[RMDB]
RNA sequence: GGGAACGACUCGAGUAGAGUCGAAAACGACCGCCUAUCUCGAAGCGGUUAUGCUGAAGCAUAUCACGGAUCGUCGCACUCAUUUCAGAAUCACCGAGCGCGGGUCGAUGGCUUUCAUGCUGCCGUCGUAGAUCUGUCUGUUCGCAGACAGAUCUACAAAAGAAACAACAACAACAAC
Reactivity to 2A3 in 0.01 (KOAc 150mM, MgCl2 10mM, bicine 150mM(pH8.5), 24C), signal-to-noise 3, nucleotides 027 to 126: c030g040a030c000c030g080c020c030u160a170u150c110u030c080g100a110a010g000c010g000g090u030u020a090u150g020c010u050g030a060a000g000c020a070u090a020u210c030a000c110g170g010a020u030c030g120u080c020g070c020a010c010u030c010a060u040u290u110c140a120g160a230a160u130c050a070c090c130g000a000g010c000g000c010g030g000g020u050c020g030a010u020g010g020c010u110u140u110c050a070u260g010c010u030g000c010c010g020u080c040
Reactivity to DMS in 0.01 (KOAc 150mM, MgCl2 10mM, bicine 150mM(pH8.5), 24C), signal-to-noise 2, nucleotides 027 to 126: c130g000a090c030c060g010c020c010u010a110u010c030u000c060g020a170a140g020c040g020g000u000u000a030u000g010c030u000g010a040a080g010c020a070u000a050u020c050a140c210g020g010a020u000c040g010u000c020g040c030a080c020u010c010a140u010u000u010c250a180g010a170a090u010c120a100c180c080g010a010g010c040g050c020g010g010g000u000c000g010a010u010g010g000c000u010u020u000c060a040u000g030c030u000g010c000c010g020u000c080

Background: This 177-nucleotide RNA was probed chemically with 2A3 and DMS. The reactions ran in a buffer of 150 mM KOAc, 10 mM MgCl2 and 150 mM bicine (pH 8.5), at 24 C. 2A3 adducts were read by reverse transcription with SuperScript II with manganese.